[RMDB]
This 207-nucleotide RNA was probed chemically with DMS and 2A3. 2A3 adducts were read by reverse transcription with SuperScript II with manganese. Reactivities are given for positions 27 through 156. Source: RMDB library M2RFPK, as collected in RNAgym. The 2A3 profile rests on 1,085 reads. Conditions: 150 mM KOAc, 10 mM MgCl2 and 150 mM bicine (pH 8.5), 24 C.

RNA sequence: GGGAACGACUCGAGUAGAGUCGAAAAGUAGAGUGUAUCAUGUCAGUAAGCAUGCCGAGGAAUGGUGGUUUACCCCGUUAUCAAAUGAUUACCGACCAAUAAUUGGCGAAACUCGUUUCGCGUUGGCAAAGUCACGGCGUGUUCGCACGCCGUGAAACGCCAUAAAUACGUUCGCGUAUUUAUGGCGAAAAGAAACAACAACAACAAC
Reactivity to DMS in 0.01 (KOAc 150mM, MgCl2 10mM, bicine 150mM(pH8.5), 24C), signal-to-noise 1, nucleotides 027 to 156: g010u000a060g030a070g000u000g000u010a040u000c040a060u010g000u010c010a040g000u010a040a060g010c010a040u010g000c140c080g060a070g000g020a100a050u000g000g020u010g000g020u000u000u000a150c040c000c010c020g030u000u000a070u000c080a020a030a120u010g000a050u010u000a040c050c030g000a040c030c070a010a060u030a050a280u010u000g040g000c030g020a120a080a040c060u000c070g000u010u000u000c020g020c040g000u000u000g000g000c090a050a090a160g010u000c010a010c000g030g000c030g050u000g030u000u000c270g000c000a030c000g040c010c020g080u000g000a010a010a060
Reactivity to 2A3 in 0.01 (KOAc 150mM, MgCl2 10mM, bicine 150mM(pH8.5), 24C), signal-to-noise 2, nucleotides 027 to 156: g090u090a000g040a000g060u040g020u050a030u120c030a050u120g100u030c060a040g050u060a040a010g040c040a030u090g040c020c020g010a030g020g070a100a010u120g030g010u040g030g010u020u030u140a100c020c030c000c000g020u030u040a120u150c070a100a100a080u160g040a050u020u070a040c070c030g100a080c020c020a010a060u120a090a130u110u080g060g000c000g000a010a020a040c090u040c070g040u010u020u020c030g040c020g030u030u040g000g040c050a100a000a000g070u030c000a000c000g000g000c000g000u010g010u000u020c070g040c070a020c000g000c020c010g000u000g000a000a000a000